[RMDB]
RNA sequence: GGGAACGACUCGAGUAGAGUCGAAAAGUGAGCUCAGGUGGCCUCUCUCCUGGCUUCUCCGCCACCUCCACCCCAAGUGCCGCACCUUCCUGCUGACCCCUCCUGGAUCCUCAGGCUGCCUGGCAGGUAUGACUACUUGAUUCGUCAAGUAGUCAUAAAAAGAAACAACAACAACAAC
Reactivity to 2A3 in 0.01 (KOAc 150mM, MgCl2 10mM, bicine 150mM(pH8.5), 24C), signal-to-noise 3, nucleotides 027 to 126: g060u070g030a030g030c040u040c190a010g000g030u020g010g020c010c000u030c010u020c010u000c020c030u010g040g010c020u080u030c030u000c010c020g030c010c010a030c010c000u050c010c010a070c030c010c000c010a050a030g070u050g060c020c000g060c020a050c010c000u040u060c020c010u040g020c020u050g090a140c020c000c010c000u020c000c010u010g030g010a060u040c000c020u060c030a010g020g000c010u020g010c010c000u010g000g000c000a010g080g030
Reactivity to DMS in 0.01 (KOAc 150mM, MgCl2 10mM, bicine 150mM(pH8.5), 24C), signal-to-noise 9, nucleotides 027 to 126: g010u000g000a100g000c090u000c050a020g020g030u000g010g010c040c030u000c100u000c050u000c030c040u000g000g010c050u000u000c050u000c050c090g000c030c030a100c040c020u000c030c040a140c040c010c020c040a090a110g010u010g010c030c040g010c070a080c050c040u000u000c020c020u000g010c040u000g010a160c050c030c010c030u000c020c010u000g010g000a090u010c070c050u000c080a060g010g010c060u000g010c010c010u000g010g010c040a070g010g010